[RMDB]
Source information: Structure probing data (DMS and 2A3) for a 177-nucleotide construct. Values cover nucleotides 27 to 126. It was measured as part of the RMDB library TTRDEL. DMS adducts were read by reverse transcription with MarathonRT.
RNA sequence: GGGAACGACUCGAGUAGAGUCGAAAAGAUAUGGAUAGGGACAUGAUCGGUGAUCGGAAACGAUCAUUGAUCAACAGCCCUCAUCCUAAGUCAAAGGCUAGAGUUCUCUUCGGAGAACUCUAGCCAAGUAUAUAUUUCGCUUCGGCGAAAUAUAUACAAAAGAAACAACAACAACAAC
Reactivity to DMS in 0.01 (KOAc 150mM, MgCl2 10mM, bicine 150mM(pH8.5), 24C), signal-to-noise 2, nucleotides 027 to 126: g010a070u000a300u010g000g000a040u010a000g000g010g000a020c040a230u000g000a020u010c020g010g000u000g000a010u020c000g010g010a110a090a160c000g000a000u000c000a010u000u000g000a030u000c010a010a040c300a150g010c000c000c000u000c150a010u000c000c000u000a040a230g000u010c040a110a110a140g000g010c000u000a000g000a030g010u000u000c000u000c000u000u010c200g020g000a010g010a000a010c010u010c000u000a000g010c000c000a000a020
Reactivity to 2A3 in 0.01 (KOAc 150mM, MgCl2 10mM, bicine 150mM(pH8.5), 24C), signal-to-noise 1, nucleotides 027 to 126: g020a020u090a030u160g010g000a000u000a030g030g010g000a010c080a200u080g010a030u000c030g040g000u000g000a000u000c010g010g030a120a050a030c020g010a000u000c000a000u010u010g000a000u020c000a000a000c000a030g020c000c000c000u010c010a000u040c000c010u040a100a030g100u060c060a070a050a190g000g000c000u000a000g010a000g000u030u000c000u020c000u030u100c300g070g020a010g010a010a000c020u000c000u000a010g030c000c010a000a000
For DMS, 1,787 sequencing reads were counted. The reactions ran in a buffer of 150 mM KOAc, 10 mM MgCl2 and 150 mM bicine (pH 8.5), at 24 C.